An RNA of 177 nucleotides, treated with 2A3 and DMS and read out base by base. Conditions: 150 mM KOAc, 10 mM MgCl2 and 150 mM bicine (pH 8.5), 24 C.

RNA sequence: GGGAACGACUCGAGUAGAGUCGAAAAGAUGAUUAGUUCGCUAAUCAUCAAAGAACGCUGCAACGCGCAGAGAGCGCGCCAGAGCGAGAAUGCGCGAAGAAAAAAGUUACGGGUUCGCCCGUAACAAUCGGUUACUAAAGUUCGCUUUAGUAACCGAAAAAGAAACAACAACAACAAC
Reactivity to 2A3 in 0.01 (KOAc 150mM, MgCl2 10mM, bicine 150mM(pH8.5), 24C), signal-to-noise 3, nucleotides 027 to 126: g010a000u010g000a000u000u010a000g020u020u070c090g010c110u000a000a000u010c000a010u010c000a010a000a010g040a110a020c030g000c050u050g010c020a040a040c020g030c010g000c060a010g150a020g040a020g290c000g010c000g020c020c020a030g020a010g030c020g030a040g030a040a070u140g020c110g000c040g080a110a140g090a130a190a010a030a000a020g000u000u000a000c000g020g040g010u010u060c200g070c000c000c000g000u000a010a000c000a000a010
Reactivity to DMS in 0.01 (KOAc 150mM, MgCl2 10mM, bicine 150mM(pH8.5), 24C), signal-to-noise 4, nucleotides 027 to 126: g010a010u000g000a010u000u000a020g010u000u020c160g030c000u000a010a010u000c000a010u000c000a070a090a110g010a130a140c030g020c030u000g000c030a170a240c010g010c000g030c010a130g000a170g000a180g010c000g010c000g010c010c050a230g000a100g020c020g000a080g010a100a140u000g000c070g000c060g020a050a140g030a020a050a080a060a140a090g010u000u000a020c000g000g000g010u000u020c240g010c010c010c000g010u000a000a000c010a070a060